[RMDB]
An RNA of 177 nucleotides, treated with DMS and 2A3 and read out base by base.
Source: RMDB library OK2TRN, as collected in RNAgym.
The RNA was probed in 150 mM KOAc, 10 mM MgCl2 and 150 mM bicine (pH 8.5) at 24 C.

RNA sequence: GGGAACGACUCGAGUAGAGUCGAAAAGAGGAUUCAACGAGCUUCGUAGCAACGAUAGCAACGUAGCUUUUGCUACGACCCGAGCUAUCGAGGGUAGCUACGUCCCAUGCUCGAGGGCAGAAUCCGACCUGAUGGGCCUAUUCGUAGGCCCAUCAGGAAAAGAAACAACAACAACAAC
Reactivity to DMS in 0.01 (KOAc 150mM, MgCl2 10mM, bicine 150mM(pH8.5), 24C), signal-to-noise 1, nucleotides 027 to 126: g020a140g010g020a010u000u000c020a130a230c070g000a020g010c030u020u000c020g000u000a000g010c000a170a150c000g020a000u000a000g000c000a180a080c020g000u000a000g000c000u000u000u000u000g020c000u000a000c010g000a100c080c120c170g010a150g000c000u000a000u000c020g020a080g010g020g050u000a050g000c000u000a040c000g000u000c130c050c110a070u000g010c010u000c000g020a080g020g010g000c300a160g000a010a010u000c010c020g010a140
Reactivity to 2A3 in 0.01 (KOAc 150mM, MgCl2 10mM, bicine 150mM(pH8.5), 24C), signal-to-noise 1, nucleotides 027 to 126: g130a040g000g000a000u000u010c010a070a050c040g000a000g050c000u130u070c020g000u000a000g000c000a000a060c010g070a040u000a010g010c030a040a030c060g000u000a000g000c020u100u200u220u300g000c020u040a020c010g060a050c000c080c000g030a080g000c000u010a000u000c000g000a160g070g040g090u120a020g030c010u000a000c010g090u050c030c000c030a030u120g020c020u010c000g020a160g010g120g050c120a040g000a000a000u000c000c010g010a050